Chemical mapping of a 177-nucleotide RNA with 2A3. The RNA was probed in 150 mM KOAc, 10 mM MgCl2 and 150 mM bicine (pH 8.5) at 24 C. As a SHAPE reagent, 2A3 marks flexible, mostly unpaired nucleotides at the ribose 2'-OH. Source: RMDB library OK1LIB, as collected in RNAgym. For 2A3 the reverse transcriptase was SuperScript II with manganese. For 2A3, 495 sequencing reads were counted.

[RMDB]
RNA sequence: GGGAACGACUCGAGUAGAGUCGAAAAGCUCGGAGACGAGCAAGGCUGACAAAACGCUGUCCCAACCUCCACGUGGUGUCGGCUGGAUAAUGCUGCAUUAUGUUGCAUUUAUCAACUGGGAAAAAAACACCGUGGAGCGGUUCGCCGCUCCACGGUGAAAAGAAACAACAACAACAAC
Reactivity to 2A3 in 0.01 (KOAc 150mM, MgCl2 10mM, bicine 150mM(pH8.5), 24C), signal-to-noise 1, nucleotides 027 to 126: g000c000u000c000g050g000a080g020a040c000g000a010g000c000a000a090g020g000c000u000g010a050c010a000a190a110a040c040g010c090u020g000u070c000c000c000a000a040c000c040u100c040c000a020c070g110u080g020g020u070g000u000c000g000g000c000u020g040g000a000u100a000a000u000g000c020u020g000c020a100u040u200a170u300g030u010u040g000c000a000u000u130u060a000u020c010a000a100c060u060g000g000g000a000a100a000a000a000a000a000